[RMDB]
RNA sequence: GGGAACGACUCGAGUAGAGUCGAAAAUGCAUUUUGUUUCUCCCAAGGCCUGGAGUCAACAUGGGGAGAGGCUUGGAGAUGCUGUGAAGCAAAGACACUGGGAACAGCUGCAGACAUUUUCCCAGACCGCACGCAUAAGAUUCGUCUUAUGCGUGCGAAAAGAAACAACAACAACAAC
Reactivity to DMS in 0.01 (KOAc 150mM, MgCl2 10mM, bicine 150mM(pH8.5), 24C), signal-to-noise 1, nucleotides 027 to 126: u010g020c070a080u020u010u000u000g000u000u000u020c010u000c050c000c020a200a150g000g000c040c010u030g000g030a260g040u000c050a050a100c050a140u010g000g000g000g000a180g000a080g000g030c030u000u000g020g000a110g000a030u010g000c050u010g030u000g010a050a040g000c040a070a090a130g020a080c070a090c030u010g020g020g040a050a050c000a050g000c130u010g000c050a010g010a140c130a090u010u010u000u010c000c000c010a190g030a110c250
Reactivity to 2A3 in 0.01 (KOAc 150mM, MgCl2 10mM, bicine 150mM(pH8.5), 24C), signal-to-noise 1, nucleotides 027 to 126: u080g010c040a050u000u060u110u100g030u000u060u000c020u000c000c010c090a030a110g120g050c020c090u210g130g000a200g060u110c030a070a070c070a300u140g070g020g000g000a030g000a010g000g020c000u050u110g080g060a230g000a050u040g020c020u000g050u030g040a110a040g010c040a080a000a000g050a050c060a050c170u040g000g020g020a020a030c000a010g040c050u030g010c080a010g050a130c030a070u050u150u020u000c000c000c030a010g020a030c020